The data come from the RNA Mapping Database (RMDB), library M2PK90. The record gives the reactivity of an RNA of 177 nucleotides to 2A3 and DMS.
[RMDB]
RNA sequence: GGGAACGACUCGAGUAGAGUCGAAAAAUAAAUAGCGCACUAAAGACGCUGAUCUUUAGUUACCUAGGAACUUUAGUGCAGAGAUCCGAGUUCCUAGCUCCCAUGUCGGACCUUACUAAGAAAAAAACUUAGUGUAUUACUUCGGUAAUACACUAAGAAAAGAAACAACAACAACAAC
Reactivity to 2A3 in 0.01 (KOAc 150mM, MgCl2 10mM, bicine 150mM(pH8.5), 24C), signal-to-noise 2, nucleotides 027 to 126: a030u120a000a060a030u200a020g090c060g000c040a040c040u000a000a030a010g020a000c030g020c300u130g020a300u030c020u000u020u010a000g000u000u060a080c000c020u010a010g000g000a000a040c040u090u100u120a160g030u170g180c060a020g060a030g010a300u050c060c050g020a000g000u010u000c000c000u000a010g000c010u020c000c030c000a010u080g060u070c020g010g020a010c000c010u040u050a060c060u110a150a090g120a150a120a030a020a010a010a060
Reactivity to DMS in 0.01 (KOAc 150mM, MgCl2 10mM, bicine 150mM(pH8.5), 24C), signal-to-noise 2, nucleotides 027 to 126: a090u000a030a020a130u010a100g010c070g050c120a070c000u000a040a000a020g000a010c040g030c160u000g030a090u000c010u000u010u000a030g000u000u000a060c150c030u020a020g010g000a010a020c020u000u000u010a070g000u010g030c060a090g000a080g020a080u000c060c040g000a060g000u000u000c000c000u000a010g000c140u000c010c000c000a130u020g000u000c020g020g000a110c010c010u000u010a080c110u020a100a100g030a000a000a050a100a050a060a150
The 2A3 profile rests on 1,227 reads. The RNA was probed in 150 mM KOAc, 10 mM MgCl2 and 150 mM bicine (pH 8.5) at 24 C. High 2A3 reactivity points to a flexible backbone, as in loops and unpaired stretches. DMS adducts were read by reverse transcription with MarathonRT.